Structure probing data (DMS and 2A3) for a 207-nucleotide construct.

[RMDB]
RNA sequence: GGGAACGACUCGAGUAGAGUCGAAAAAGCUUUGGGACUCCAUUAAGUGUGUGGUGUUUAGGCAGACUGUGUCCCUGGGUAAAGUGUGCUGUUGAAGAGGAUAGUACACAAUGAAAUAAUUGGGCUUGGGAAAUCAACUGGGCUUCAGCAGCCUCAACUAUCGUCAUUUAUUCGUAAAUGACGAUAGAAAAGAAACAACAACAACAAC
Reactivity to DMS in 0.01 (KOAc 150mM, MgCl2 10mM, bicine 150mM(pH8.5), 24C), signal-to-noise 3, nucleotides 027 to 156: a110g020c040u010u000u020g020g050g000a060c010u000c060c040a130u000u000a070a110g020u020g020u000g040u010g000g030u010g010u010u010u000a100g020g030c060a100g030a110c040u080g030u000g000u000c040c020c030u010g010g000g000u000a070a050a150g010u000g010u020g030c000u010g040u000u000g030a080a100g000a170g020g000a080u000a050g040u000a060c010a030c050a060a080u010g010a110a100a130u010a060a150u010u010g000g010g010c050u000u000g010g020g000a080a070a120u010c060a070a090c070u000g000g010g000c060u000u000c050a060g030c060a100g000c020c010u000c010a040a200
Reactivity to 2A3 in 0.01 (KOAc 150mM, MgCl2 10mM, bicine 150mM(pH8.5), 24C), signal-to-noise 7, nucleotides 027 to 156: a000g050c040u110u070u060g020g010g010a030c030u030c060c020a100u130u140a140a080g040u060g010u020g010u030g100g030u070g050u070u120u080a080g020g000c010a010g030a100c040u050g020u020g020u110c020c000c010u020g020g000g040u120a120a120a070g030u030g030u050g030c010u010g010u040u030g030a080a050g020a020g070g030a030u040a070g030u050a020c050a000c000a020a040u100g030a060a060a060u130a050a090u110u080g040g000g000c050u030u040g050g000g010a050a080a070u090c020a010a060c060u050g000g000g010c000u060u040c030a030g010c020a010g000c020c000u030c020a020a060
The DMS profile rests on 6,202 reads. The RNA was probed in 150 mM KOAc, 10 mM MgCl2 and 150 mM bicine (pH 8.5) at 24 C. For 2A3 the reverse transcriptase was SuperScript II with manganese. The data come from the RNA Mapping Database (RMDB), library OK3TST.